RNA sequence: GGGAACGACUCGAGUAGAGUCGAAAAGGUCUUGCCGUCGGCCCUGGCCUGAACGCAGGCCAUCAGGAUGGCAGUCGCUACCUCCUGGGGCAUGGCGCUUGCCGUCUCUCCUAUGGUCUCCACGGGAUGACCAAAUCAUCUUCGGAUGAUUUGGUCAAAAAGAAACAACAACAACAAC
Reactivity to DMS in 0.01 (KOAc 150mM, MgCl2 10mM, bicine 150mM(pH8.5), 24C), signal-to-noise 2, nucleotides 027 to 126: g000g010u010c030u000u000g030c050c010g040u010c080g000g000c040c050c060u020g000g000c000c020u000g010a100a200c300g040c050a020g000g000c010c000a050u040c050a100g000g020a030u000g020g000c060a050g020u000c120g000c040u000a070c030c020u000c030c060u010g010g010g010g000c120a090u000g020g020c020g020c010u000u000g020c020c010g000u000c020u000c100u010c030c040u010a120u010g000g010u010c010u000c020c040a110c030g000g000g010a130
Reactivity to 2A3 in 0.01 (KOAc 150mM, MgCl2 10mM, bicine 150mM(pH8.5), 24C), signal-to-noise 1, nucleotides 027 to 126: g000g010u060c050u060u040g100c110c030g020u020c000g040g020c000c040c010u070g060g000c010c010u010g040a300a050c140g030c220a020g000g020c010c010a090u060c030a000g050g020a010u120g020g000c040a020g100u080c050g000c050u040a050c010c040u050c000c010u030g030g030g000g000c090a160u110g010g020c000g030c030u030u070g020c000c000g120u000c010u010c060u010c020c030u080a100u070g070g000u070c040u000c050c040a040c000g080g000g010a080